The data come from the RNA Mapping Database (RMDB), library M2RFOK.
This 207-nucleotide RNA was probed chemically with DMS and 2A3.
Values cover nucleotides 27 to 156.
For 2A3 the reverse transcriptase was SuperScript II with manganese.
For DMS, 2,448 sequencing reads were counted.
Conditions: 150 mM KOAc, 10 mM MgCl2 and 150 mM bicine (pH 8.5), 24 C.

RNA sequence: GGGAACGACUCGAGUAGAGUCGAAAACGGUAUUGGUCAAGGCUAUACCGACAGCGCACCUUCAAAAGGGCGCUUAAUCCCCGGCCAAUCGCCGAAAUAUGAAUAGACACCGCUGGGCUGGUAGGGCAAAACAUGGCGAUCUUCGGAUCGCCAUGAAGCUCAAUUAAUUCUUCGGAAUUAAUUGAGCAAAAGAAACAACAACAACAAC
Reactivity to DMS in 0.01 (KOAc 150mM, MgCl2 10mM, bicine 150mM(pH8.5), 24C), signal-to-noise 1, nucleotides 027 to 156: c040g020g040u000a020u000u030g060g020u000c020a130a160g000g040c030u000a110u000a110c020c030g000a130c130a010g000c080g000c020a070c000c010u020u010c150a130a110a190a100g000g040g020c020g010c030u000u010a040a120u000c010c000c000c030g010g000c020c000a150a070u000c100g020c010c010g010a000a140a070u010a100u010g000a130a100u020a160g000a100c020a060c070c010g050c030u010g010g000g050c060u000g000g020u000a010g000g020g000c050a090a060a020a140c010a020u000g000g000c000g040a020u000c000u000u000c240g020g040a020u000c010g040c010c000a000u010g000a020a140
Reactivity to 2A3 in 0.01 (KOAc 150mM, MgCl2 10mM, bicine 150mM(pH8.5), 24C), signal-to-noise 3, nucleotides 027 to 156: c010g000g000u010a030u050u140g030g020u070c080a100a080g070g000c010u040a010u040a070c020c010g020a040c050a030g000c000g000c080a300c090c010u050u100c080a100a080a050a040g000g010g000c000g000c000u000u010a020a020u010c000c000c000c000g010g000c000c070a050a060u110c060g000c010c010g040a030a060a010u170a070u110g070a050a070u070a100g060a010c020a010c020c030g020c050u030g010g030g000c020u020g000g030u030a050g020g010g020c020a010a000a040a060c000a010u000g000g000c000g010a000u000c000u010u010c040g080g010a000u000c000g010c000c000a000u000g000a000a000